[RMDB]
RNA sequence: GGGAACGACUCGAGUAGAGUCGAAAACAUGGAGUCUUCGGACUCCAUGCACUACCGAAAUAAUGCCUCGGAAUAAAAGGCAAACCCUUGGAAACAAGGGAACGAUGUCACGAUUCGUCGUGACAAAUCAGAGAUUGUAUUUCGAUACAAUCUCUGAAAAAGAAACAACAACAACAAC
Reactivity to 2A3 in 0.01 (KOAc 150mM, MgCl2 10mM, bicine 150mM(pH8.5), 24C), signal-to-noise 7, nucleotides 027 to 126: c000a000u000g000g000a020g000u010c020u060u060c290g080g010a000c010u000c000c000a000u000g010c000a020c020u100a060c000c010g060a050a080a080u240a080a080u090g000c010c010u020c030g020g080a070a040u240a150a080a010a000g000g000c000a010a040a160c000c000c000u000u000g010g010a040a040a020c000a010a010g000g000g030a010a000c030g080a070u090g000u000c000a000c000g010a020u050u050c180g040u010c000g000u090g000a000c000a000a020a020
Reactivity to DMS in 0.01 (KOAc 150mM, MgCl2 10mM, bicine 150mM(pH8.5), 24C), signal-to-noise 5, nucleotides 027 to 126: c000a020u010g000g000a020g000u000c010u010u030c240g040g010a010c000u010c000c000a000u000g010c040a110c100u000a190c000c000g010a120a120a100u010a100a100u010g020c010c010u000c020g000g010a140a110u000a040a080a040a010g000g010c000a050a080a160c000c000c000u000u000g000g000a140a110a190c000a010a010g000g010g000a040a040c190g000a090u010g000u000c000a010c000g000a030u000u010c170g020u000c000g020u000g010a000c000a010a040a070
Chemical mapping of a 177-nucleotide RNA with 2A3 and DMS. 2A3 adducts were read by reverse transcription with SuperScript II with manganese. For DMS, 8,209 sequencing reads were counted.